Source: RMDB library M2RFPK, as collected in RNAgym. This 207-nucleotide RNA was probed chemically with 2A3 and DMS. 2A3 adducts were read by reverse transcription with SuperScript II with manganese. Values cover nucleotides 27 to 156. DMS adducts were read by reverse transcription with MarathonRT. For 2A3, 1,146 sequencing reads were counted.
[RMDB]
RNA sequence: GGGAACGACUCGAGUAGAGUCGAAAAGAGUUCGGUUGGAGCGACAAGUAUUUAGCUUGAGAUAGCUAAAUCACCUCGGUAUGUUUAGGGUGAGACCUAGGAACCGUAGGGGUAUUCUCAAAGGAAGGUUACCGAACAACCUUCGGGUUGUUCGGAAGCUUCCACAACGUUUCGACGUUGUGGAAGCAAAAGAAACAACAACAACAAC
Reactivity to 2A3 in 0.01 (KOAc 150mM, MgCl2 10mM, bicine 150mM(pH8.5), 24C), signal-to-noise 2, nucleotides 027 to 156: g090a010g010u060u100c070g010g070u070u050g060g000a060g020c030g020a010c040a080a000g050u050a050u010u030u040a000g000c010u010u010g020a030g030a110u170a050g000c000u040a010a000a020u030c010a000c000c000u050c030g040g020u080a060u190g120u050u110u080a020g010g030g000u030g070a090g050a040c000c030u020a030g070g000a040a030c000c040g050u090a030g020g010g030g000u040a090u100u100c070u030c000a080a110a000g050g010a040a010g050g040u060u110a040c010c020g000a010a000c000a000a000c000c010u030u050c000g010g000g010u000u000g010u010u000c000g010g000a000a000
Reactivity to DMS in 0.01 (KOAc 150mM, MgCl2 10mM, bicine 150mM(pH8.5), 24C), signal-to-noise 1, nucleotides 027 to 156: g020a140g030u000u010c000g030g030u020u000g020g000a100g000c040g050a060c080a040a090g020u010a030u000u000u000a020g000c010u000u000g000a240g000a180u000a000g000c000u000a010a010a040u000c020a060c040c000u000c020g040g070u000a020u020g020u000u010u000a070g010g000g010u000g000a290g000a160c040c010u000a050g000g000a070a040c010c010g030u020a000g030g000g000g020u000a060u010u000c020u000c020a100a080a110g000g010a060a030g010g020u000u000a180c000c010g000a060a010c000a020a000c000c010u000u030c300g050g030g010u010u000g010u000u010c000g020g000a020a040